The data come from the RNA Mapping Database (RMDB), library 15KLIB. Structure probing data (DMS and 2A3) for a 170-nucleotide construct. For DMS the reverse transcriptase was MarathonRT.

[RMDB]
RNA sequence: GGGAACGACUCGAGUAGAGUCGAAAAAGGAAUGGCGGGACCCCACUCUACAGGGUCCGCGUUCCAUCCUUUCUUACCUGAUGGCCGGCAUGGUCCCAGCCUCCUCGCUGGCGCCGGCUGGGCAACACUAGGCCCCUCUUCGGAGGGGCCAAAAGAAACAACAACAACAAC
Reactivity to DMS in 0.01 (KOAc 150mM, MgCl2 10mM, bicine 150mM(pH8.5), 24C), signal-to-noise 3, nucleotides 027 to 129: a100g040g000a170a020u000g050g080c020g010g000g010a000c000c000c000c000a180c170u060c270u000a090c130a170g000g010g010u010c010c010g120c000g020u050u010c000c000a080u010c010c050u060u000u000c060u010u000a100c000c080u010g030a270u050g060g000c020c050g000g220c000a070u020g070g010u100c300c020c000a090g000c010c090u020c040c180u080c070g030c010u010g010g000c290g000c000c000g000g000c070u020g000g000g010c030a060a070c090a110c180u040a050
Reactivity to 2A3 in 0.01 (KOAc 150mM, MgCl2 10mM, bicine 150mM(pH8.5), 24C), signal-to-noise 3, nucleotides 027 to 129: a000g030g000a130a000u020g210g070c040g000g040g050a090c050c010c000c000a070c080u290c020u120a160c080a100g010g020g000u010c000c020g080c000g010u050u110c000c000a000u010c030c000u060u030u040c010u040u040a060c010c050u000g130a070u140g030g110c000c000g000g010c030a120u190g040g030u140c000c000c070a000g030c000c030u110c080c050u100c050g020c000u000g000g000c050g000c000c000g000g000c000u000g000g000g030c010a100a000c020a010c090u000a040